[RMDB]
RNA sequence: GGGAACGACUCGAGUAGAGUCGAAAAGAUAUGGACCGGAGCAACAGCUCCCACUCGGAAACGAGUGUUCGGAGACAUGCUCGUCCUAAGUCAAACUGAUUUGACUGCUUCGGCAGUCAAAUCAGAACUGAAUCUAGGAGUUCGCUCCUAGAUUCAGAAAAGAAACAACAACAACAAC
Reactivity to DMS in 0.01 (KOAc 150mM, MgCl2 10mM, bicine 150mM(pH8.5), 24C), signal-to-noise 2, nucleotides 027 to 126: g010a000u000a200u000g000g000a020c080c290g070g030a020g010c000a020a070c240a150g010c000u000c000c000c000a010c000u000c000g010g000a120a050a110c000g010a020g010u000g000u020u010c140g000g000a010g030a070c070a150u000g010c000u000c000g000u000c000c000u000a050a100g000u000c030a080a090a210c020u000g000a030u000u000u000g010a010c000u000g000c000u000u020c170g030g000c000a000g000u000c000a000a000a000u000c000a000g000a070a200
Reactivity to 2A3 in 0.01 (KOAc 150mM, MgCl2 10mM, bicine 150mM(pH8.5), 24C), signal-to-noise 2, nucleotides 027 to 126: g020a000u030a000u120g000g000a030c100c300g170g030a000g000c030a000a170c030a240g020c010u000c000c010c000a000c000u000c000g000g000a070a060a020c000g000a000g030u020g030u070u100c050g010g020a010g040a060c080a090u070g000c040u000c010g000u000c000c000u020a170a020g070u000c040a040a090a130c010u000g000a010u000u000u000g010a010c000u010g020c010u030u090c230g170g000c000a000g000u000c010a000a000a000u000c000a010g000a020a010